[RMDB]
This 177-nucleotide RNA was probed chemically with 2A3 and DMS. For 2A3, 2,496 sequencing reads were counted. Conditions: 150 mM KOAc, 10 mM MgCl2 and 150 mM bicine (pH 8.5), 24 C. For DMS the reverse transcriptase was MarathonRT. For 2A3 the reverse transcriptase was SuperScript II with manganese. For DMS, 1,282 sequencing reads were counted.

RNA sequence: GGGAACGACUCGAGUAGAGUCGAAAAGAUAUGGACUUUGUAACGAACUACUCGUAACCAUCGGAAACGAUGGCCCGAGCGAAUCAAAGUCCUAAGUCAAACGCUGGCAGCUUCGGCUGCCAGCGAACCAUAACUUCAGGUUCGCCUGAAGUUAUGGAAAAGAAACAACAACAACAAC
Reactivity to 2A3 in 0.01 (KOAc 150mM, MgCl2 10mM, bicine 150mM(pH8.5), 24C), signal-to-noise 1, nucleotides 027 to 126: g010a000u050a020u130g000g000a010c030u040u010u010g030u060a200a070c070g030a140a140c220u300a010c020u280c020g000u030a050a030c020c000a030u010c010g040g040a030a030a050c000g000a000u000g000g000c000c010c000g000a040g030c070g080a070a090u070c010a000a010a000g000u020c000c000u010a030a000g030u040c000a210a030a000c030g000c030u010g000g040c000a000g000c030u180u160c260g190g000c020u030g070c000c010a000g000c000g000a000a010
Reactivity to DMS in 0.01 (KOAc 150mM, MgCl2 10mM, bicine 150mM(pH8.5), 24C), signal-to-noise 2, nucleotides 027 to 126: g010a040u000a300u010g000g000a010c000u000u000u000g000u010a110a300c120g000a060a070c110u000a180c040u000c000g000u000a100a140c020c010a010u000c010g000g010a080a080a150c020g010a020u000g000g010c130c160c000g000a030g020c050g040a150a140u000c000a000a000a020g000u020c010c010u000a020a140g010u020c040a140a070a210c000g080c000u000g000g000c000a020g000c010u000u000c290g010g000c000u010g060c000c000a000g000c000g000a010a070